[RMDB]
RNA sequence: GGGAACGACUCGAGUAGAGUCGAAAAGAUAUGGAUUAAGCUGUGGCGAAUUUAGGGAGCGAACGUGAGGGUCGGAAACGACCCUCUCGCGAGGAUCUAACUGUUCGCCACAGCUUAAUCCUAAGUCGACUACGUAGAACUUCGGUUCUACGUAGUCAAAAGAAACAACAACAACAAC
Reactivity to DMS in 0.01 (KOAc 150mM, MgCl2 10mM, bicine 150mM(pH8.5), 24C), signal-to-noise 1, nucleotides 027 to 126: g000a110u000a300u010g010g010a040u010u010a000a010g020c000u010g010u020g030g020c000g010a020a030u000u000u020a020g000g000g000a240g010c020g010a110a060c070g000u000g010a010g000g010g000u020c000g000g000a020a090a180c040g000a040c000c000c000u010c000u000c010g000c020g010a230g040g000a190u000c010u000a010a030c300u000g020u000u000c000g030c020c000a010c000a000g000c000u010u000a000a000u000c000c000u000a040a070g010u010c100

The data come from the RNA Mapping Database (RMDB), library TTRINS. Structure probing data (DMS) for a 177-nucleotide construct. The reactions ran in a buffer of 150 mM KOAc, 10 mM MgCl2 and 150 mM bicine (pH 8.5), at 24 C. The DMS profile rests on 1,047 reads.